Structure probing data (2A3 and DMS) for a 177-nucleotide construct. 2A3 is a SHAPE reagent: it acylates the 2'-hydroxyl of flexible nucleotides of all four kinds. The reactions ran in a buffer of 150 mM KOAc, 10 mM MgCl2 and 150 mM bicine (pH 8.5), at 24 C.
RNA sequence: GGGAACGACUCGAGUAGAGUCGAAAAGAUAUGGAGCGUUCUACCCACCCUAUAGCAACUAUUCGGAAACGAACGAAUUGCUGUAGGAGGAACGCUCCUAAGUCAAACGCGGCGUUCGCGCCGCGAACCAUUAAAGUCUGUUCGCAGACUUUAAUGGAAAAGAAACAACAACAACAAC
Reactivity to 2A3 in 0.01 (KOAc 150mM, MgCl2 10mM, bicine 150mM(pH8.5), 24C), signal-to-noise 4, nucleotides 027 to 126: g100a060u230a150u300g000g000a000g000c000g010u010u010c040u140a300c020c030c020a030c010c000c000u000a010u000a000g000c000a010a050c080u050a050u020u040c010g030g040a100a090a110c030g050a040a020c040g080a280a300u020u000g000c000u010g000u000a000g000g000a000g020g000a000a000c000g000c010u000c000c000u010a000a000g040u030c070a000a010a150c030g000c020g020g020c000g020u070u080c190g000c000g030c140c000g010c000g000a000a010
Reactivity to DMS in 0.01 (KOAc 150mM, MgCl2 10mM, bicine 150mM(pH8.5), 24C), signal-to-noise 4, nucleotides 027 to 126: g010a160u020a150u000g020g010a010g010c000g000u010u000c000u000a110c020c020c030a300c130c000c000u000a010u000a010g010c000a010a040c100u000a300u000u000c000g000g000a130a120a180c020g010a010a010c080g010a050a040u000u000g000c010u000g000u000a000g000g010a090g000g000a010a010c000g000c000u000c000c000u000a010a040g000u010c140a100a120a130c040g030c000g010g000c000g030u000u010c150g020c010g030c010c010g000c010g000a010a090